[RMDB]
Chemical mapping of a 207-nucleotide RNA with DMS and 2A3. Source: RMDB library OK3TST, as collected in RNAgym. For DMS the reverse transcriptase was MarathonRT.
RNA sequence: GGGAACGACUCGAGUAGAGUCGAAAAAGUUAAAACUUCAUAAUGAUCGUUAAUAAUACCGAUGGGGGCACAUCUGGAGAGGAUGUCGUGGCUACGACAACUAUGGCCAAAAGAACAGGUUCAAAACCCUAACUAACCAGGUCCGAAACUCGUAAAAACGCACUAUUAAUUUCGAUUAAUAGUGCGUAAAAGAAACAACAACAACAAC
Reactivity to DMS in 0.01 (KOAc 150mM, MgCl2 10mM, bicine 150mM(pH8.5), 24C), signal-to-noise 1, nucleotides 027 to 156: a170g020u000u000a050a020a110a130c000u000u030c010a100u000a090a140u000g010a040u000c040g000u000u010a070a090u010a160a110u000a210c060c010g010a110u010g000g000g020g010g000c050a050c010a020u000c050u000g060g040a090g000a240g010g000a060u020g000u000c040g070u000g020g030c120u000a040c090g010a030c020a030a030c060u000a070u000g040g030c000c140a000a110a090a070g000a100a160c030a040g030g030u000u000c120a030a060a110a050c110c000c010u000a030a120c050u010a080a050c040c070a110g010g030u020c010c060g000a090a010a010c070u000c030g020u000a020a030a070a090
Reactivity to 2A3 in 0.01 (KOAc 150mM, MgCl2 10mM, bicine 150mM(pH8.5), 24C), signal-to-noise 1, nucleotides 027 to 156: a000g080u080u060a070a030a000a070c050u190u130c080a240u190a140a080u140g050a100u060c000g010u020u050a060a030u080a120a020u070a260c130c040g010a040u060g080g000g030g000g000c000a000c000a060u020c000u020g080g000a040g000a020g130g010a020u000g000u010c060g000u030g000g020c020u040a010c020g000a020c020a040a020c080u050a140u040g040g000c000c000a000a160a000a000g010a040a040c020a000g000g000u000u070c020a000a000a000a140c000c000c000u040a010a010c000u000a000a000c020c020a010g020g020u000c020c050g070a050a030a020c090u110c050g010u050a050a090a000a050